[RMDB]
RNA sequence: GGGAACGACUCGAGUAGAGUCGAAAAUCAUAUAUCAGUUUCGGUAUAGCAAUCAUCAAAGAUCGCAUUUGACAGUUAUGUCAAAGGGACACACCCUUCGCGCGUCCUGGGGCGUGCCAGUCGAUGACCCAGACAUAAAGUUCGCUUUAUGUCUGGGAAAAGAAACAACAACAACAAC
Reactivity to 2A3 in 0.01 (KOAc 150mM, MgCl2 10mM, bicine 150mM(pH8.5), 24C), signal-to-noise 2, nucleotides 027 to 126: u060c000a020u050a000u020a000u090c040a050g030u030u100u120c030g020g020u030a020u010a030g070c040a050a090u080c040a010u030c030a180a000a030g050a040u020c040g010c120a100u000u010u070g010a000c000a030g080u270u210a140u160g010u020c000a010a020a020g060g000g050a020c020a000c000a030c050c000c000u060u070c060g000c020g000c000g060u030c020c020u080g060g000g060g020c010g020u010g000c000c000a080g020u120c040g030a030u030g040a040
Reactivity to DMS in 0.01 (KOAc 150mM, MgCl2 10mM, bicine 150mM(pH8.5), 24C), signal-to-noise 2, nucleotides 027 to 126: u020c050a130u000a050u000a020u010c000a120g010u000u000u010c110g000g010u000a000u000a020g000c090a080a040u000c050a060u010c170a060a100a090g010a060u000c060g010c060a190u000u000u010g010a020c000a010g010u010u010a070u010g010u000c000a000a000a020g010g010g010a060c060a060c090a060c020c020c050u000u010c110g010c040g020c170g020u000c000c030u000g000g000g000g050c060g000u000g020c030c040a090g010u000c100g000a080u010g000a220